The record gives the reactivity of an RNA of 207 nucleotides to DMS and 2A3. For DMS the reverse transcriptase was MarathonRT. 2A3 adducts were read by reverse transcription with SuperScript II with manganese.

[RMDB]
RNA sequence: GGGAACGACUCGAGUAGAGUCGAAAACAGGUUCGAGCGCUUACCGUCUGACACCGUUAAAGAUAGUAAGCACAACCCCAACGGUUGCUCUAGAAUUUCGCCUUUGGUCGGCAUUCUAGCUAAGACAAUACCAAAGCAUCCUAUUGUCCGGGACAAAGAUAGGAAGUAUGUUCGCAUACUUCCUAUCAAAAGAAACAACAACAACAAC
Reactivity to DMS in 0.01 (KOAc 150mM, MgCl2 10mM, bicine 150mM(pH8.5), 24C), signal-to-noise 3, nucleotides 027 to 156: c090a110g010g020u000u000c060g010a120g070c020g020c010u000u010a000c010c010g000u000c010u000g010a300c120a210c060c200g010u020u000a140a180a000g010a050u000a040g000u000a010a020g000c000a030c020a080a130c020c010c020c090a060a070c050g000g010u000u000g000c000u000c040u000a030g000a040a050u000u000u000c030g050c010c020u000u010u000g050g030u000c060g020g020c060a080u000u010c020u000a050g000c090u000a140a100g010a070c020a020a030u000a050c010c000a070a040a170g030c180a100u010c030c050u000a040u010u000g000u000c030c040g020g020g030a110c060a070a100a220
Reactivity to 2A3 in 0.01 (KOAc 150mM, MgCl2 10mM, bicine 150mM(pH8.5), 24C), signal-to-noise 6, nucleotides 027 to 156: c060a030g090g090u150u150c090g110a080g090c120g020c040u000u010a010c020c020g020u000c000u010g010a010c010a030c050c030g020u030u040a050a010a010g010a010u030a000g010u010a010a000g070c100a030c020a060a040c020c020c010c020a030a010c020g020g000u010u020g000c000u020c000u010a010g010a020a010u030u020u030c010g010c010c000u020u000u030g020g000u020c000g000g000c000a000u010u000c010u010a020g000c010u010a020a010g040a020c070a130a110u060a070c010c000a020a020a000g040c010a080u070c010c020u050a110u100u250g090u120c100c090g030g000g020a030c050a040a060a020
Reactivities are given for positions 27 through 156.